Chemical mapping of a 177-nucleotide RNA with DMS and 2A3. It was measured as part of the RMDB library OK1LIB.
RNA sequence: GGGAACGACUCGAGUAGAGUCGAAAACACCAUUUGCACGCCAUGUUUGGUGGUAUCAAAGGCGAAGUGCCACACCCUACUGGAGAGCUUCACCUACGAUGAGAUUCUUCACUUGGAAAAAUUGGCAUCGCUCGUAGUAUUUCGAUACUACGAGCGAAAAAGAAACAACAACAACAAC
Reactivity to DMS in 0.01 (KOAc 150mM, MgCl2 10mM, bicine 150mM(pH8.5), 24C), signal-to-noise 2, nucleotides 027 to 126: c070a160c000c010a110u020u000u020g000c140a120c110g000c010c000a070u010g000u000u030u000g000g110u000g000g000u040a090u030c090a000a170a030g010g000c020g060a080a110g000u000g000c000c010a020c180a090c020c000c030u020a080c250u000g000g010a030g000a150g020c020u000u000c000a020c070c100u000a070c300g000a100u010g010a070g000a080u000u000c020u020u000c000a030c100u010u000g000g010a140a000a010a060a150u010u000g000g000c010a110
Reactivity to 2A3 in 0.01 (KOAc 150mM, MgCl2 10mM, bicine 150mM(pH8.5), 24C), signal-to-noise 5, nucleotides 027 to 126: c070a000c000c030a060u070u070u110g130c110a070c090g020c010c030a060u050g200u090u040u110g080g010u020g010g010u060a050u150c070a090a070a030g030g000c040g040a140a020g040u050g070c000c000a040c000a030c000c020c010u100a140c040u070g000g010a040g000a000g020c010u040u030c010a040c030c050u140a090c060g050a080u090g020a020g040a090u050u010c000u050u020c010a030c070u030u160g020g000a040a030a040a150a160u110u050g030g000c020a040